Notes: An RNA of 207 nucleotides, treated with 2A3 and DMS and read out base by base. For DMS the reverse transcriptase was MarathonRT. For 2A3 the reverse transcriptase was SuperScript II with manganese.
RNA sequence: GGGAACGACUCGAGUAGAGUCGAAAAUGGUAUUCUACAUUGCUUUCUUGGCUUUGGGUUAUUUAUCAAAUAGAUUGAAGAAAAGCAAAACACGUGGAAGCCUUAUCUCCGUAAAGAGGCAGCGUUUUUACAUUUUUAAACGUUCAGCGUAUCCUGACUAUAUGCUAAUCUUCGGAUUAGCAUAUAGAAAAGAAACAACAACAACAAC
Reactivity to 2A3 in 0.01 (KOAc 150mM, MgCl2 10mM, bicine 150mM(pH8.5), 24C), signal-to-noise 2, nucleotides 027 to 156: u150g020g030u140a300u090u000c000u010a010c010a030u000u050g000c000u030u000u030c000u020u020g100g000c020u070u020u020g080g020g040u100u130a170u090u230u130a100u100c020a020a020a070u110a090g070a200u090u300g100a030a010g050a030a060a000a010g010c000a000a000a070a050c100a030c170g000u010g030g000a040a000g020c000c000u020u070a060u060c030u000c000c040g060u090a030a080a010g050a040g060g000c030a020g000c000g010u010u000u010u050u050a050c030a070u100u140u030u070u140a030a070a000c020g020u020u030c070a020g010c010g020u040a040u040c010c030u050g020a010
Reactivity to DMS in 0.01 (KOAc 150mM, MgCl2 10mM, bicine 150mM(pH8.5), 24C), signal-to-noise 2, nucleotides 027 to 156: u020g010g020u010a090u000u000c010u010a050c010a170u000u000g040c000u000u010u000c020u000u000g020g000c020u000u010u010g000g030g030u000u010a100u000u010u010a150u000c060a060a040a110u000a070g000a090u000u000g010a050a050g010a050a030a050a050g010c050a000a020a050a050c050a020c070g020u010g000g020a010a020g000c000c020u010u010a090u010c040u000c030c050g000u020a050a100a150g000a080g010g000c100a070g010c030g010u000u000u020u010u000a080c100a150u000u000u000u000u000a020a040a030c010g010u000u000c070a110g010c050g010u000a120u000c000c010u000g020a300